[RMDB]
RNA sequence: GGGAACGACUCGAGUAGAGUCGAAAAAAAAGAUAUGGACCAUUCUACCCACCUCAUGAUGCCUAAGACAGCACCUCGGAAACGAGGUGUCGAGGCAUCAAGUGAGAGGAAUGGUCCUAAGUCAAAACCGUACCAUAAAGUUCGCUUUAUGGUACGGAAAAGAAACAACAACAACAAC
Reactivity to DMS in 0.01 (KOAc 150mM, MgCl2 10mM, bicine 150mM(pH8.5), 24C), signal-to-noise 4, nucleotides 027 to 126: a060a070a120a150g010a080u000a260u020g010g000a000c000c000a010u000u000c000u000a240c010c020c020a300c080c080u010c090a060u000g000a000u000g010c000c020u030a220a130g020a140c300a160g000c000a010c000c000u010c000g010g000a200a080a110c000g000a000g010g020u000g020u000c040g020a020g000g010c010a000u000c000a040a070g040u010g000a020g000a300g010g020a020a000u010g000g000u000c000c000u000a010a070g010u010c070a070a050a150a110
Reactivity to 2A3 in 0.01 (KOAc 150mM, MgCl2 10mM, bicine 150mM(pH8.5), 24C), signal-to-noise 2, nucleotides 027 to 126: a000a000a000a000g170a070u230a070u180g000g000a000c000c010a030u010u010c030u110a300c040c000c010a070c000c010u030c020a020u070g000a000u020g000c040c010u070a150a040g060a070c050a040g020c010a020c010c010u020c020g010g020a060a060a060c000g010a010g000g030u000g000u050c030g000a010g000g000c000a000u010c000a020a000g050u000g010a050g030a020g030g000a000a010u000g000g000u000c000c010u000a010a000g110u010c040a000a030a080a170